[RMDB]
RNA sequence: GGGAACGACUCGAGUAGAGUCGAAAAAAGCAUGUCUCUCUAUUGUCUCUCUAUUCAGAACUUAGUAUGGUGAUGGAUCGAUAGAGAGACAUUCCUGCAUCUGUCUUCCAUCACCAUAAAAACAAAAACUAUAAGUGAUCUUCGGAUCACUUAUAGUAAAAGAAACAACAACAACAAC
Reactivity to DMS in 0.01 (KOAc 150mM, MgCl2 10mM, bicine 150mM(pH8.5), 24C), signal-to-noise 3, nucleotides 027 to 126: a070a060g000c220a070u010g010u000c010u000c020u000c020u000a050u000u000g010u010c090u000c030u010c050u000a070u000u000c090a120g010a070a120c170u010u000a100g010u010a040u000g000g010u000g000a030u010g000g000a020u010c070g020a020u000a010g010a020g000a010g010a000c000a020u000u000c020c020u000g000c180a090u010c100u000g000u010c110u000u000c010c000a020u000c010a030c000c000a010u000a000a040a070a050a030c090a040a070a060a110
Reactivity to 2A3 in 0.01 (KOAc 150mM, MgCl2 10mM, bicine 150mM(pH8.5), 24C), signal-to-noise 3, nucleotides 027 to 126: a000a000g110c050a070u050g000u000c000u010c000u000c000u020a020u040u030g080u010c020u030c000u000c020u130a110u170u140c080a070g030a210a120c050u110u080a060g090u050a160u020g020g010u010g000a010u020g000g000a020u090c050g000a000u000a000g000a000g000a010g010a000c000a000u000u000c000c000u000g020c010a090u040c060u200g190u030c040u030u020c000c010a000u000c020a000c030c000a000u000a010a030a000a000a000c020a000a080a030a010